[RMDB]
RNA sequence: GGGAACGACUCGAGUAGAGUCGAAAACCCAAAACCAUCAUUGUAAAUACACUUUUUUCAAUGUAUAGCUAGGGUGGAUAUUAAUUGGUUGUGAAAAGAGUUGCUUUUUAGUCAUGAUAGUAGCAUACAAGUAAACCCUGUUCGCAGGGUUUACUUGAAAAGAAACAACAACAACAAC
Reactivity to DMS in 0.01 (KOAc 150mM, MgCl2 10mM, bicine 150mM(pH8.5), 24C), signal-to-noise 1, nucleotides 027 to 126: c000c000c010a070a040a180a120c040c050a010u000c010a060u000u010g010u000a050a180a110u000a040c100a070c070u000u000u000u000u000u000c070a080a060u000g000u020a000u000a240g000c040u000a020g030g040g010u000g010g020a230u010a080u000u010a090a070u000u010g010g030u000u010g010u000g010a060a040a060a120g020a100g000u000u000g000c040u030u000u000u010u000a030g020u010c080a070u030g010a040u010a080g010u000a080g020c060a000u020a060
Chemical mapping of a 177-nucleotide RNA with DMS.
The RNA was probed in 150 mM KOAc, 10 mM MgCl2 and 150 mM bicine (pH 8.5) at 24 C.
For DMS the reverse transcriptase was MarathonRT.